Structure probing data (DMS and 2A3) for a 177-nucleotide construct. The 2A3 profile rests on 3,231 reads. The reactions ran in a buffer of 150 mM KOAc, 10 mM MgCl2 and 150 mM bicine (pH 8.5), at 24 C. It was measured as part of the RMDB library TTRDEL. For 2A3 the reverse transcriptase was SuperScript II with manganese.

RNA sequence: GGGAACGACUCGAGUAGAGUCGAAAAGAUAUGGAAAAGUUCGAGGAUCACCACAUCGGAAACGAUGUAAGGUGGGAGAAUUUCCUAAGUCAAAACCCUUCUGCCCAGUUCGCUGGGCAGAAGGGAAGUAGUUGAGAUUGUUCGCAAUCUCAACUACAAAAGAAACAACAACAACAAC
Reactivity to DMS in 0.01 (KOAc 150mM, MgCl2 10mM, bicine 150mM(pH8.5), 24C), signal-to-noise 2, nucleotides 027 to 126: g010a010u000a300u020g000g000a010a060a030a100g010u000u000c000g010a100g010g000a040u020c000a000c000c010a100c010a000u000c000g010g000a110a070a180c010g020a000u000g010u010a070a040g000g020u000g010g010g000a080g020a050a040u000u000u000c000c000u000a060a130g000u010c020a060a120a160a070c000c000c000u000u010c020u000g000c010c000c010a000g010u000u000c250g010c020u010g010g000g030c040a010g000a000a000g000g000g000a000a000
Reactivity to 2A3 in 0.01 (KOAc 150mM, MgCl2 10mM, bicine 150mM(pH8.5), 24C), signal-to-noise 1, nucleotides 027 to 126: g000a010u070a070u090g000g050a070a100a130a170g180u050u020c060g050a230g100g050a050u060c000a010c010c000a010c000a010u000c010g050g000a050a030a070c010g000a000u000g010u040a070a140g000g000u020g020g010g000a030g000a010a000u010u000u040c020c000u040a130a050g060u060c040a000a020a100a180c000c000c000u000u020c010u010g030c030c020c000a050g030u110u120c300g060c150u010g010g010g050c000a000g000a010a010g010g030g000a000a010